RNA sequence: GGGAACGACUCGAGUAGAGUCGAAAACAUCAAUGAUAUGGAGCAAGGCCCGAAAGAGCGAUGAAAGCUUUCGGAAACGAAAGCUGGAGCUCUAGUAGCUGGCUGAUGACCUCCUAAGUCCGCGGAACGUGGAUCUCACGUUCGCGUGAGAUCCACGAAAAGAAACAACAACAACAAC
Reactivity to DMS in 0.01 (KOAc 150mM, MgCl2 10mM, bicine 150mM(pH8.5), 24C), signal-to-noise 1, nucleotides 027 to 126: c080a050u010c060a130a160u000g020a060u020a300u000g000g000a020g020c020a040a120g020g000c020c000c000g000a080a110a150g020a060g010c000g040a110u010g000a120a140a010g000c000u000u000u000c000g010g030a070a020a130c010g010a000a000a010g000c000u000g000g000a020g040c000u010c010u000a040g010u030a190g010c180u000g010g020c000u000g020a140u000g000a090c300c000u010c000c000u000a050a160g010u000c010c070g010c130g030g020a050a050
Description:
Source: RMDB library TTRDEL, as collected in RNAgym. An RNA of 177 nucleotides, treated with DMS and read out base by base. For DMS, 696 sequencing reads were counted. The reactions ran in a buffer of 150 mM KOAc, 10 mM MgCl2 and 150 mM bicine (pH 8.5), at 24 C.